[RMDB]
RNA sequence: GGGAACGACUCGAGUAGAGUCGAAAAGAUAUGGAAUGUCCUGAGCAACAGCCUGAUGUCGGAAACGACAUACAGGACAUGCUCCUGACAUUCCUAAGUCAAAGCACCGGAUGUUCGCAUCCGGUGCCCUUUACGCUACCUUCGGGUAGCGUAAAGGAAAAGAAACAACAACAACAAC
Reactivity to DMS in 0.01 (KOAc 150mM, MgCl2 10mM, bicine 150mM(pH8.5), 24C), signal-to-noise 2, nucleotides 027 to 126: g000a030u000a110u020g000g000a030a000u000g000u000c000c040u000g000a010g030c000a100a050c250a130g010c000c020u000g000a020u000g000u010c010g000g000a020a020a050c000g000a020c000a000u000a070c020a000g010g020a020c020a300u010g000c000u010c000c010u000g000a030c000a000u000u000c000c000u010a000a060g010u000c000a100a130a220g010c000a000c000c010g000g010a010u000g000u010u010c300g040c000a010u000c000c000g000g010u000g010c000
Reactivity to 2A3 in 0.01 (KOAc 150mM, MgCl2 10mM, bicine 150mM(pH8.5), 24C), signal-to-noise 3, nucleotides 027 to 126: g010a000u040a020u060g000g000a010a010u010g000u010c010c010u040g000a000g000c090a080a150c080a250g010c000c000u020g010a000u000g010u000c000g000g020a020a010a000c010g040a000c010a000u290a250c020a000g020g020a020c010a180u300g000c000u000c010c000u020g010a000c010a010u000u000c000c000u010a000a010g000u000c060a180a150a100g000c000a010c010c000g020g000a010u000g050u120u230c300g010c190a000u000c000c000g000g000u000g000c010
This 177-nucleotide RNA was probed chemically with DMS and 2A3. For DMS the reverse transcriptase was MarathonRT. The reactions ran in a buffer of 150 mM KOAc, 10 mM MgCl2 and 150 mM bicine (pH 8.5), at 24 C. For 2A3, 5,120 sequencing reads were counted. 2A3 adducts were read by reverse transcription with SuperScript II with manganese.